Structure probing data (DMS) for a 177-nucleotide construct. Reactivities are rounded to 0.1 and cut off at 0 and 3. DMS (dimethyl sulfate) methylates the pairing face of unpaired adenines and cytosines. For DMS, 1,288 sequencing reads were counted. The data come from the RNA Mapping Database (RMDB), library OK2TRN. The reactions ran in a buffer of 150 mM KOAc, 10 mM MgCl2 and 150 mM bicine (pH 8.5), at 24 C.

RNA sequence: GGGAACGACUCGAGUAGAGUCGAAAACACUGUGCCAAAUGUACCGGGAGUGCCGUAUAAGGCACUGGUAGAGAGGUCAGGCUAUGCCCCAUUGAACCUGGAGGUGAUGGUGGUCUCAUCUGAGUUGAGCGCAUGCUGUAUUCGUACAGCAUGCGCUAAAAGAAACAACAACAACAAC
Reactivity to DMS in 0.01 (KOAc 150mM, MgCl2 10mM, bicine 150mM(pH8.5), 24C), signal-to-noise 2, nucleotides 027 to 126: c110a160c020u000g000u000g020c020c010a030a130a080u000g010u000a020c030c040g020g020g030a090g010u000g050c030c010g020u010a180u020a050a180g000g030c010a000c000u000g030g000u000a050g000a060g030a240g050g010u000c000a040g050g000c100u000a090u070g000c050c030c000c130a100u010u010g010a110a070c040c040u000g000g000a150g050g010u000g030a040u010g030g040u000g030g000u000c060u000c060a100u000c120u000g010a140g020u040u000g010